[RMDB]
RNA sequence: GGGAACGACUCGAGUAGAGUCGAAAAUCGAGAGCAGGUCCUAUCAAGUCAUCAACUAUCUGAUCUUAUCAUCAGUCUUAGGAAUGAUAAGGACAAGGCAUUCUUCGACCUUAUGGUUUUGCUCAAAGAUCUAGUGUUUGUUCGCAAACACUAGAUCAAAAGAAACAACAACAACAAC
Reactivity to DMS in 0.01 (KOAc 150mM, MgCl2 10mM, bicine 150mM(pH8.5), 24C), signal-to-noise 3, nucleotides 027 to 126: u010c050g020a160g010a020g010c020a080g010g020u000c010c000u000a090u000c160a080a200g010u000c020a040u000c100a080a140c040u000a050u010c010u000g000a020u000c040u010u010a110u010c180a000u000c010a030g010u010c180u000u010a060g000g020a100a050u000g000a020u000a050a070g010g010a050c030a050a060g000g010c140a090u010u000c050u010u000c090g000a020c010c000u010u010a100u010g010g010u000u000u010u010g010c040u000c030a050a080a130
Reactivity to 2A3 in 0.01 (KOAc 150mM, MgCl2 10mM, bicine 150mM(pH8.5), 24C), signal-to-noise 5, nucleotides 027 to 126: u080c020g010a010g000a000g000c020a020g000g060u000c000c000u030a040u100c060a120a060g080u000c010a050u020c020a060a130c020u020a030u040c000u010g000a020u000c030u060u200a070u140c060a000u000c010a010g160u030c090u060u100a030g000g050a120a030u020g010a000u020a040a070g020g000a000c020a030a010g100g000c030a110u130u060c050u110u100c050g050a120c010c000u060u130a100u090g080g020u020u040u080u090g030c000u010c010a050a050a020